Annotation
An RNA of 177 nucleotides, treated with 2A3 and DMS and read out base by base. For 2A3 the reverse transcriptase was SuperScript II with manganese. Source: RMDB library RFMREP, as collected in RNAgym. The 2A3 profile rests on 2,600 reads.

[RMDB]
RNA sequence: GGGAACGACUCGAGUAGAGUCGAAAAGUGUUGACAGGGAUGCUAGAAGACACUUUCUUCAUGGAGUGUAUUGGCAUUCUAGGUUAGCAUGUAGGAGCGGAAGAGGGCGACUGUAUUGCGUAGCGAGGAAUCACACUCACUUCGGUGAGUGUGAUUCAAAAGAAACAACAACAACAAC
Reactivity to 2A3 in 0.01 (KOAc 150mM, MgCl2 10mM, bicine 150mM(pH8.5), 24C), signal-to-noise 2, nucleotides 027 to 126: g000u020g020u000u050g030a010c020a040g000g030g000a010u010g000c000u020a060g070a220a000g070a080c000a000c000u060u090u100c040u130u130c090a130u270g020g000a000g010u020g010u080a070u090u140g040g000c040a000u000u020c000u010a040g080g060u020u030a000g000c010a000u030g030u060a050g000g070a070g040c050g020g020a080a010g010a060g000g030g010c020g020a030c010u040g020u100a090u110u040g000c050g010u010a020g030c000g010a040g020
Reactivity to DMS in 0.01 (KOAc 150mM, MgCl2 10mM, bicine 150mM(pH8.5), 24C), signal-to-noise 2, nucleotides 027 to 126: g030u000g000u000u000g010a000c000a300g000g000g010a020u000g000c000u000a060g000a110a060g010a020c020a010c000u000u000u000c040u000u010c300a210u020g000g000a000g000u010g000u000a050u010u000g010g000c000a020u000u000c000u000a110g020g000u000u000a000g030c020a020u010g010u020a100g000g000a070g010c090g000g010a030a070g000a130g020g000g010c060g000a080c130u000g000u010a070u000u010g000c050g020u010a110g010c070g000a110g000